[RMDB]
RNA sequence: GGGAACGACUCGAGUAGAGUCGAAAACUCUUGGAUCCGGUCGCAUCAACACGGUUCCAUUCGUCGUGACAAAGCGCGCCCAUGCGAAUGUCUCGGUCUAUACGACACUUUCAAAUCUAGAGGCGAAUACGAAUAUCAGCACAUUCACGUCAAUCACACCGUCGAUUAUGUUCGCAUAAUCGACGGUAAAAGAAACAACAACAACAAC
Reactivity to 2A3 in 0.01 (KOAc 150mM, MgCl2 10mM, bicine 150mM(pH8.5), 24C), signal-to-noise 2, nucleotides 027 to 156: c060u050c030u030u050g000g000a020u030c000c010g060g050u040c060g000c140a170u090c040a130a130c060a040c140g000g000u030u000c000c010a000u070u110c210g070u060c000g020u000g000a020c030a020a030a040g010c000g000c000g080c020c010c000a070u110g020c010g020a000a050u010g050u020c040u030c050g000g040u060c080u060a110u060a180c150g040a030c060a000c040u090u030u040c050a070a050a210u060c070u060a000g040a040g070g000c000g090a100a040u060a110c030g040a030a000u140a060u090c080a000g110c040a000c000a020u000u070c010a020c070g030u030c040a000a070u100c020a020c010